Structure probing data (2A3) for a 207-nucleotide construct. The RNA was probed in 150 mM KOAc, 10 mM MgCl2 and 150 mM bicine (pH 8.5) at 24 C.
RNA sequence: GGGAACGACUCGAGUAGAGUCGAAAAGUAUUCCUGUUCGCAGGAAUACAAAAAAGAUAUGGAGACUGAUGACCCUGUCCACAUCGAUCUCGGAAACGAGGGAGUGGUGCAGGCAAGGUCUCCUAAGUCAAAAAAUACUUGUGUUCGCACAAGUAAACUCAAGUACAGGAUUCGUCCUGUACUUGAGAAAAGAAACAACAACAACAAC
Reactivity to 2A3 in 0.01 (KOAc 150mM, MgCl2 10mM, bicine 150mM(pH8.5), 24C), signal-to-noise 2, nucleotides 027 to 156: g000u000a000u000u000c000c000u020g040u030u100c270g040c030a010g000g020a000a000u000a020c010a040a110a000a000a010a000g110a070u120a070u090g010g000a000g010a010c010u010g060a210u220g030a190c010c050c000u000g030u010c000c010a000c010a190u280c050g110a100u010c010u000c000g020g050a060a080a050c000g000a000g000g000g000a020g000u000g010g050u270g010c010a000g010g000c000a080a020g010g010u010c020u000c000c000u000a010a000g000u010c040a000a000a020a020a000a240u100a020c000u010u010g010u010g010u080u100c250g010c120a010c020a000a000g000u010a010a120a080